Source: RMDB library OK2TRN, as collected in RNAgym.
Chemical mapping of a 177-nucleotide RNA with 2A3 and DMS.
Values are in units of 0.01, from 0 to 300, in steps of 10.
RNA sequence: GGGAACGACUCGAGUAGAGUCGAAAAUCGGCGUCGCGCACGGCGAGCAAGUGAAGGUGUCGUCCAACCGCGGGCACAUCGUCGCGGUCGCGCUCGUCACCAAGCGCAUCAAGCCGCUCAUGGUCGACACGAGUAGGGGAUUCGUCCCCUACUCGUGAAAAGAAACAACAACAACAAC
Reactivity to 2A3 in 0.01 (KOAc 150mM, MgCl2 10mM, bicine 150mM(pH8.5), 24C), signal-to-noise 2, nucleotides 027 to 126: u070c010g010g000c020g030u070c080g000c000g020c020a030c030g000g000c010g020a010g000c040a130a110g020u040g040a030a040g070g000u040g050u070c150g010u040c040c000a090a070c100c120g090c220g070g000g010c030a000c010a050u060c070g020u030c000g010c010g100g130u120c090g010c010g000c090u020c030g000u000c010a020c030c040a170a040g000c020g010c020a010u060c070a010a050g010c030c000g020c010u060c040a130u140g090g010u070c060g020a030
Reactivity to DMS in 0.01 (KOAc 150mM, MgCl2 10mM, bicine 150mM(pH8.5), 24C), signal-to-noise 3, nucleotides 027 to 126: u020c000g000g010c020g000u000c250g020c020g000c000a130c200g010g030c030g000a040g010c020a110a120g020u000g020a040a120g020g020u010g020u000c060g020u000c010c010a060a140c260c270g000c120g000g010g000c000a030c060a030u000c020g010u000c010g000c010g020g020u010c220g000c150g000c010u000c030g000u000c020a070c090c130a130a090g010c020g020c010a130u000c170a120a150g010c030c050g020c050u000c010a090u010g010g030u000c110g020a220